[RMDB]
RNA sequence: GGGAACGACUCGAGUAGAGUCGAAAAGAUGAUGAGGAAGGUGCCAUUCCUCAGCAAUGGGAUCUUCCAGAUGUUGACAAAUUUUUAGCCAAAAUGCGCACGGACCCGGCUGGUGAACCUGCGCAGGCUAACACUGAUGAUGACUCUUUGAGUGUUAGAUAAAGACCAUGUUCGCAUGGUCUUUAUCAAAAGAAACAACAACAACAAC
Reactivity to 2A3 in 0.01 (KOAc 150mM, MgCl2 10mM, bicine 150mM(pH8.5), 24C), signal-to-noise 3, nucleotides 027 to 156: g100a030u220g020a040u080g030a050g010g020a010a000g010g000u030g290c000c000a000u030u000c010c120u210c100a020g060c100a000a010u010g020g000g040a000u000c000u010u020c020c030a010g010a060u040g000u050u020g040a070c090a050a090a080u070u070u000u010u020a020g000c010c000a070a170a180a240u110g010c010g000c010a030c130g040g000a040c010c010c020g200g050c260u230g010g010u110g050a120a060c000c000u010g010c000g000c000a000g000g020c010u000a000a000c030a000c060u040g020a030u050g020a070u140g050a070c020u020c000u170u070u110g020a030g010u010g020u020u060a030
Reactivity to DMS in 0.01 (KOAc 150mM, MgCl2 10mM, bicine 150mM(pH8.5), 24C), signal-to-noise 1, nucleotides 027 to 156: g020a110u010g000a080u020g010a240g000g020a020a050g050g030u000g030c040c010a050u000u000c050c130u020c150a150g000c040a050a030u000g020g000g000a060u000c020u000u000c030c000a060g000a070u020g010u000u020g020a120c050a080a080a130u010u000u000u020u000a020g000c030c010a050a040a120a140u010g000c000g000c010a020c070g010g010a300c020c020c000g000g000c080u000g030g000u000g000a080a110c050c000u000g040c000g020c000a030g000g000c000u000a020a030c110a040c020u000g020a090u010g000a090u010g010a130c070u000c030u000u000u010g000a040g030u000g010u000u010a140